[RMDB]
RNA sequence: GGGAACGACUCGAGUAGAGUCGAAAAGAGAUGCCUAAAACCAGUCAUACUUGAUGGUGAGAGAGUCAUCUUGGCUGGGCCCAUGCCUGUCACGCAUGCUAGUGCUGCUCAGAGGAGAGGACGUAUAUGUCUAUCCAAUCUUCGGAUUGGAUAGACAAAAAGAAACAACAACAACAAC
Reactivity to DMS in 0.01 (KOAc 150mM, MgCl2 10mM, bicine 150mM(pH8.5), 24C), signal-to-noise 3, nucleotides 027 to 126: g020a070g030a080u000g000c060c020u010a060a040a100a040c030c020a040g010u010c030a040u040a140c200u010u000g010a070u000g040g010u000g000a150g000a210g020a120g020u040c020a000u000c040u000u000g000g000c060u000g000g000g010c000c040c000a030u020g000c000c050u010g010u000c120a130c230g010c080a040u020g000c050u040a060g000u000g000c100u020g020c030u030c050a090g000a140g000g020a070g000a050g020g000a040c050g030u020a090u040a040
Reactivity to 2A3 in 0.01 (KOAc 150mM, MgCl2 10mM, bicine 150mM(pH8.5), 24C), signal-to-noise 5, nucleotides 027 to 126: g080a000g010a010u110g030c010c030u070a070a040a030a070c020c010a000g130u050c000a040u080a270c080u120u170g020a020u040g020g050u050g020a090g010a030g010a010g050u050c010a000u000c000u020u020g050g000c020u010g010g020g000c000c020c000a030u080g010c000c000u140g060u170c040a010c100g030c020a020u050g040c030u080a070g040u070g080c060u010g000c000u010c050a040g010a020g140g030a080g010a030g040g000a030c040g120u100a080u040a050